RNA sequence: GGGAACGACUCGAGUAGAGUCGAAAAGUCGAGCGAGAAUCUGUUGAAUGAUCCUUCGGGUGAAUGAUUCAGAGGACAGCGGCAAACGGGGUAGUAAUGCAUAGGUAUGUACCCUCUGGUCGGGAAUGUUAUGCAGUACUUUCGAGUACUGCAUAACAAAAGAAACAACAACAACAAC
Reactivity to 2A3 in 0.01 (KOAc 150mM, MgCl2 10mM, bicine 150mM(pH8.5), 24C), signal-to-noise 7, nucleotides 027 to 126: g050u050c050g010a030g070c040g010a160g030a200a040u000c010u000g020u020u010g030a040a030u030g010a010u000c000c000u050u050c180g070g000g000u010g030a030a010u030g010a030u010u000c000a000g000a000g000g030a010c000a020g010c000g020g000c010a040a060a070c040g010g020g020g000u040a040g060u050a110a080u080g030c060a090u090a130g180g040u120a040u110g080u040a040c000c030c000u000c060u080g080g010u040c050g010g010g090a070a090u060
Reactivity to DMS in 0.01 (KOAc 150mM, MgCl2 10mM, bicine 150mM(pH8.5), 24C), signal-to-noise 5, nucleotides 027 to 126: g010u000c020g000a100g040c020g000a090g040a300a160u000c010u010g030u010u010g010a300a030u000g020a140u020c010c000u010u050c170g020g010g000u010g000a150a010u020g020a210u010u000c020a010g020a060g020g000a280c290a040g000c030g000g010c040a040a050a110c120g000g010g010g020u000a030g000u020a060a030u010g000c050a100u020a070g000g020u020a040u000g010u000a030c030c000c010u000c150u020g000g000u000c080g010g010g030a080a110u030